[RMDB]
Structure probing data (DMS and 2A3) for a 177-nucleotide construct. DMS (dimethyl sulfate) methylates the pairing face of unpaired adenines and cytosines.
RNA sequence: GGGAACGACUCGAGUAGAGUCGAAAAGCCUCAUCAUCCACAGGCUGAAGGCAGACGAUGAUGGUAUCUACCUGUGCGAGAUGCGGGGCCGGGUGCGCACCGUGGCCAACGUCACAGUCAAAGGUCAUAACCGAAAAGGAUUCGUCCUUUUCGGUUAAAAAGAAACAACAACAACAAC
Reactivity to DMS in 0.01 (KOAc 150mM, MgCl2 10mM, bicine 150mM(pH8.5), 24C), signal-to-noise 6, nucleotides 027 to 126: g010c000c000u000c030a050u000c030a060u010c020c070a110c200a140g000g000c040u000g010a100a150g030g010c020a050g020a160c240g000a030u000g000a070u010g010g020u000a060u000c040u000a100c220c010u000g020u000g020c040g000a080g010a070u000g000c120g000g000g010g030c010c040g000g020g020u010g020c120g000c070a060c020c030g010u010g010g000c030c040a080a070c090g000u010c040a040c060a040g000u000c080a050a100a090g010g000u010c100a150
Reactivity to 2A3 in 0.01 (KOAc 150mM, MgCl2 10mM, bicine 150mM(pH8.5), 24C), signal-to-noise 3, nucleotides 027 to 126: g020c000c000u030c000a040u000c010a030u040c020c030a060c030a100g130g000c030u070g110a070a060g200g000c040a030g000a110c080g030a030u120g010a010u050g010g080u060a100u020c020u040a070c010c000u010g030u030g040c030g020a050g020a090u090g010c020g030g030g000g000c010c010g160g020g040u170g020c090g010c040a030c020c010g050u070g020g010c010c000a060a030c040g090u120c030a020c020a040g050u060c060a100a060a000g050g000u020c010a070

The reactions ran in a buffer of 150 mM KOAc, 10 mM MgCl2 and 150 mM bicine (pH 8.5), at 24 C. Values cover nucleotides 27 to 126.